[RMDB]
RNA sequence: GGGAACGACUCGAGUAGAGUCGAAAAAAUUCAGUAACUUGCAGAGGGCACACAUGAUUGCCGACGCUGCAUUCAGAAGACAGACAAGAUGCGAUUCCUGGUUCAGAGGAACUAGGUCUGCUCCGCAGGUGGGGAGGGGAGGUCAGGUGUGGCAACACAUUAGGACCCAUUUCGAUGGGUCCUAAUGAAAAGAAACAACAACAACAAC
Reactivity to 2A3 in 0.01 (KOAc 150mM, MgCl2 10mM, bicine 150mM(pH8.5), 24C), signal-to-noise 2, nucleotides 027 to 156: a000a030u220u140c070a040g020u020a060a080c060u040u030g030c020a020g040a090g030g000g000c000a040c010a000c030a140u140g040a250u070u140g010c030c020g070a050c080g040c030u040g000c000a010u020u090c030a010g040a140a010g050a120c100a010g050a030c040a090a050g030a110u070g040c080g070a050u030u090c000c000u000g000g050u030u040c060a020g040a100g300g000a050a000c000u020a000g010g030u010c040u060g020c020u000c040c040g020c080a030g020g070u180g040g000g000g010a150g010g040g000g010a080g000g040u080c050a020g050g000u060g000u000g090g000c000a000a070c010a030
Reactivity to DMS in 0.01 (KOAc 150mM, MgCl2 10mM, bicine 150mM(pH8.5), 24C), signal-to-noise 1, nucleotides 027 to 156: a040a060u000u000c030a190g020u010a080a080c030u000u000g000c000a040g000a090g010g010g000c050a080c030a060c120a200u010g020a130u010u000g050c000c010g000a080c020g020c010u000g000c010a070u000u000c070a130g020a160a130g000a100c050a060g000a170c060a110a100g000a040u010g020c060g010a210u000u000c000c020u000g030g020u000u000c020a210g000a160g050g010a010a020c010u000a020g020g030u000c070u000g000c090u000c040c060g000c050a000g020g000u050g000g010g040g010a140g000g000g030g020a080g000g020u000c010a050g000g020u000g040u020g010g000c010a090a100c040a140
Chemical mapping of a 207-nucleotide RNA with 2A3 and DMS. 2A3 is a SHAPE reagent: it acylates the 2'-hydroxyl of flexible nucleotides of all four kinds. The DMS profile rests on 1,936 reads. 2A3 adducts were read by reverse transcription with SuperScript II with manganese. For DMS the reverse transcriptase was MarathonRT.